This 177-nucleotide RNA was probed chemically with DMS and 2A3. For 2A3 the reverse transcriptase was SuperScript II with manganese. As a SHAPE reagent, 2A3 marks flexible, mostly unpaired nucleotides at the ribose 2'-OH. The data come from the RNA Mapping Database (RMDB), library OK1LIB. The DMS profile rests on 4,117 reads. The RNA was probed in 150 mM KOAc, 10 mM MgCl2 and 150 mM bicine (pH 8.5) at 24 C.
RNA sequence: GGGAACGACUCGAGUAGAGUCGAAAACCUUGGCACUAGGAGCCGAUGAAGGACGUGAUAAGCUGCGAUAAGCUUCGGGGAGUUGCACGUAAACUUUGAUCCGAAGAUUUCCGAAUGAGGAAACUCAAUCCCAUAUGCUCUUCGGAGCAUAUGGGAUAAAAGAAACAACAACAACAAC
Reactivity to DMS in 0.01 (KOAc 150mM, MgCl2 10mM, bicine 150mM(pH8.5), 24C), signal-to-noise 3, nucleotides 027 to 126: c000c000u010u020g010g010c020a090c120u020a120g000g000a150g000c020c010g020a100u020g000a130a150g020g010a040c010g000u000g000a030u000a060a130g000c000u020g030c020g020a030u010a030a030g000c000u000u000c000g000g000g000g000a010g020u000u010g000c030a270c300g000u020a020a020a000c030u020u000u050g000a000u000c010c000g000a030a010g000a040u010u000u000c000c000g040a100a130u030g000a090g000g010a090a030a100c020u000c040a100
Reactivity to 2A3 in 0.01 (KOAc 150mM, MgCl2 10mM, bicine 150mM(pH8.5), 24C), signal-to-noise 4, nucleotides 027 to 126: c000c000u030u050g050g000c040a030c080u140a100g080g120a060g090c020c020g010a010u080g050a090a060g000g000a000c000g000u020g020a070u020a200a010g000c010u010g000c010g090a120u000a050a000g000c000u000u000c000g010g000g000g000a020g010u000u000g020c080a100c240g090u100a040a030a030c010u190u170u000g010a020u040c000c010g000a010a000g020a060u000u010u020c000c000g010a060a050u130g020a030g000g050a040a070a050c040u050c030a020